[RMDB]
An RNA of 207 nucleotides, treated with DMS and 2A3 and read out base by base. The reactions ran in a buffer of 150 mM KOAc, 10 mM MgCl2 and 150 mM bicine (pH 8.5), at 24 C. Values cover nucleotides 27 to 156. The 2A3 profile rests on 1,802 reads. High 2A3 reactivity points to a flexible backbone, as in loops and unpaired stretches. It was measured as part of the RMDB library RNAMAK.

RNA sequence: GGGAACGACUCGAGUAGAGUCGAAAAGCGUACUACACUAGACAUGCUGUGAAGGGCUCGAUAAGGAAGCUCCCAAAUAGGAGCUUCCUUUUGACGAGCCUGGAGGCAGCAACAGCUAGUGUAUCGCAAAACAACAAACACUUCGGUGUUUGUUGAACAUUCGGAUAACGUUCGCGUUAUCCGAAUGAAAAGAAACAACAACAACAAC
Reactivity to DMS in 0.01 (KOAc 150mM, MgCl2 10mM, bicine 150mM(pH8.5), 24C), signal-to-noise 3, nucleotides 027 to 156: g030c030g020u000a020c040u000a000c020a010c010u000a010g010a050c040a300u000g000c000u000g020u000g010a300a300g010g010g010c000u000c000g010a190u010a030a030g010g000a010a000g000c000u000c000c010c030a020a090a210u000a040g000g010a020g010c000u010u000c000c000u000u000u000u000g010a260c090g020a030g020c000c000u000g010g010a280g000g000c000a020g000c000a010a030c080a160g020c000u000a000g020u000g000u000a010u000c000g010c010a060a040a080a160c030a010a030c000a010a000a020c010a000c000u010u000c300g050g010u000g010u000u000u000g000u000u000g010a070a200
Reactivity to 2A3 in 0.01 (KOAc 150mM, MgCl2 10mM, bicine 150mM(pH8.5), 24C), signal-to-noise 2, nucleotides 027 to 156: g040c010g050u090a070c080u030a020c020a010c000u010a000g000a090c030a120u020g000c030u000g070u150g040a060a030g000g000g000c000u000c000g020a020u020a060a000g010g000a010a000g000c000u040c020c030c060a160a290a030u300a050g000g000a000g000c000u000u010c020c070u000u000u010u000g000a000c000g000a010g000c000c010u000g000g000a010g080g000c000a010g000c000a010a020c040a010g020c000u000a000g030u020g000u000a000u100c000g000c000a020a070a000a000c000a000a000c000a000a000a000c000a000c030u030u070c250g080g010u000g000u000u000u000g000u000u000g020a030a000